The record gives the reactivity of an RNA of 207 nucleotides to 2A3 and DMS. For DMS, 2,094 sequencing reads were counted. Reactivities are given for positions 27 through 156. It was measured as part of the RMDB library OK3TST. The RNA was probed in 150 mM KOAc, 10 mM MgCl2 and 150 mM bicine (pH 8.5) at 24 C. 2A3 is a SHAPE reagent: it acylates the 2'-hydroxyl of flexible nucleotides of all four kinds.

RNA sequence: GGGAACGACUCGAGUAGAGUCGAAAAUAGUGUAUGUCAGAUUAUAGUAGAGAGACCUGCUAGAAUUGGGGACUUUCCUUGGACAAGGCAUUGAUGGUGAGAUGUAAAAGAUGAGAAGGAAUUAACUAUGCAAAGAGUUCUCAUAGGGGCAUUCCAGCUUCAUGAAUCGAUUCGUCGAUUCAUGAAGAAAAGAAACAACAACAACAAC
Reactivity to 2A3 in 0.01 (KOAc 150mM, MgCl2 10mM, bicine 150mM(pH8.5), 24C), signal-to-noise 1, nucleotides 027 to 156: u110a010g010u080g010u020a110u040g030u030c020a010g030a050u050u010a010u130a120g030u050a020g000a000g010a010g040a100c000c030u010g060c080u050a050g070a130a040u040u070g060g020g000g030a020c010u040u110u000c010c030u040u070g050g010a030c030a080a030g070g000c040a030u010u120g030a030u050g090g040u020g070a030g010a010u080g010u100a000a050a120a020g010a020u070g010a010g040a030a020g000g010a000a000u030u010a030a000c070u050a030u050g010c000a000a120a000g030a030g050u090u030c080u000c050a000u060a050g000g000g100g040c010a010u080u020c040c010a010g010
Reactivity to DMS in 0.01 (KOAc 150mM, MgCl2 10mM, bicine 150mM(pH8.5), 24C), signal-to-noise 2, nucleotides 027 to 156: u000a100g010u010g010u000a110u000g000u000c000a130g020a090u000u010a060u010a090g010u020a030g010a130g000a230g020a140c110c030u000g000c040u010a070g010a050a130u020u000g010g010g020g010a080c040u000u000u000c020c010u000u000g060g010a070c060a060a080g000g010c060a110u000u000g000a120u010g010g020u000g000a070g030a110u000g000u000a030a030a040a150g010a150u010g010a070g040a070a100g000g000a120a080u010u010a020a120c100u000a050u000g020c070a060a060a150g000a240g020u000u000c020u000c020a100u010a070g010g030g040g050c100a090u000u030c020c030a250g010